[RMDB]
RNA sequence: GGGAACGACUCGAGUAGAGUCGAAAAGCAGGUGUCAAGGGUUGAAUGGGGCGCAGGGACAAGCGCAUUACAAUCAUUUGAGCCUGAUAACCCAGUAGAGCUAACCCCCAGAGCAGCAACAACUAGGGUAAUAAGUGUGCUUCGGCACACUUAUUACAAAAGAAACAACAACAACAAC
Reactivity to DMS in 0.01 (KOAc 150mM, MgCl2 10mM, bicine 150mM(pH8.5), 24C), signal-to-noise 2, nucleotides 027 to 126: g020c010a030g030g000u010g040u000c030a090a010g030g010g010u010u010g000a110a070u010g010g000g000g080c050g030c030a080g030g010g000a100c200a170a100g020c000g000c010a030u000u010a160c040a020a040u010c020a090u030u000u000g010a300g000c000c000u000g010a070u010a140a190c020c030c010a070g010u000a070g000a060g000c020u010a110a120c050c010c030c030c030a090g000a040g010c020a030g000c050a020a040c070a030a040c130u010a090g020g010